[RMDB]
Annotation:
The record gives the reactivity of an RNA of 177 nucleotides to 2A3 and DMS. It was measured as part of the RMDB library OK1LIB. DMS adducts were read by reverse transcription with MarathonRT. Reactivities are given for positions 27 through 126. 2A3 adducts were read by reverse transcription with SuperScript II with manganese. The reactions ran in a buffer of 150 mM KOAc, 10 mM MgCl2 and 150 mM bicine (pH 8.5), at 24 C.
RNA sequence: GGGAACGACUCGAGUAGAGUCGAAAAUGAGAAAGAUAGAAGAGUAGAACAAGAUGACCUAUUUGAUUUUGUUCUUGAUCAAUUUGAUAAGGGUCUCAAAGUUAAACGUAGUGAUGGAAAGAUUUCCCACCCAAUGGGGUUUCGACCCCAUUGGGUGAAAAGAAACAACAACAACAAC
Reactivity to 2A3 in 0.01 (KOAc 150mM, MgCl2 10mM, bicine 150mM(pH8.5), 24C), signal-to-noise 2, nucleotides 027 to 126: u090g010a000g040a060a090a000g070a000u120a120g110a140a040g070a050g090u080a010g010a050a000c040a060a080g110a050u200g020a040c000c000u090a160u040u150u210g110a060u010u000u020u110g070u170u000c000u060u030g020a000u020c070a060a080u080u070u140g120a140u170a060a060g080g000g000u030c070u000c060a070a090a000g010u050u150a060a130a000c120g020u040a040g050u090g130a050u030g000g030a100a010a040g020a060u070u000u000c000c060
Reactivity to DMS in 0.01 (KOAc 150mM, MgCl2 10mM, bicine 150mM(pH8.5), 24C), signal-to-noise 2, nucleotides 027 to 126: u060g000a150g010a100a070a090g000a100u000a050g030a070a120g000a080g040u000a050g000a000a020c060a000a080g000a050u040g000a070c060c110u030a200u030u010u020g020a070u020u010u010u000g000u000u030c020u000u000g000a100u000c040a020a050u010u020u060g000a080u020a020a070g000g000g050u000c000u010c030a010a050a050g000u030u010a020a110a110c100g000u010a060g000u010g000a120u000g000g000a060a040a090g020a090u000u000u000c020c000